[RMDB]
RNA sequence: GGGAACGACUCGAGUAGAGUCGAAAACAUCCACUGCUACGGCAGUGGAUGAACGAGGUAGGUACGCCUACCUCGAAAGGCGGAUGUAGUCAUAUACAUUAAACGUCCAUGGUACGCCAUGGACGAAGUAAUGCGCAUCGUUCGCGAUGCGCAUUACAAAAGAAACAACAACAACAAC
Reactivity to 2A3 in 0.01 (KOAc 150mM, MgCl2 10mM, bicine 150mM(pH8.5), 24C), signal-to-noise 1, nucleotides 027 to 126: c010a000u000c000c000a020c000u000g000c000u040a060c220g120g030c000a000g010u000g000g000a000u000g000a000a010c010g010a010g000g000u000a010g030g070u020a020c170g070c040c000u010a010c020c000u000c010g000a040a010a000g090g000c100g100g010a030u070g020u040a010g010u030c060a020u070a000u000a150c060a040u110u100a160a130a010c010g000u000c000c010a010u000g000g010u060a050c300g000c030c010a010u020g010g000a000c010g000a000a000
Reactivity to DMS in 0.01 (KOAc 150mM, MgCl2 10mM, bicine 150mM(pH8.5), 24C), signal-to-noise 1, nucleotides 027 to 126: c010a010u000c000c000a000c000u000g060c010u000a060c280g060g010c030a000g000u020g030g010a010u000g010a060a070c020g010a000g000g010u000a000g000g050u000a110c270g020c000c000u010a020c010c010u000c010g000a000a050a070g020g050c110g000g040a000u000g000u000a000g000u000c160a120u010a130u000a000c020a070u000u000a130a160a150c030g000u010c000c030a020u000g000g000u000a140c280g030c010c010a000u010g010g000a000c000g000a000a030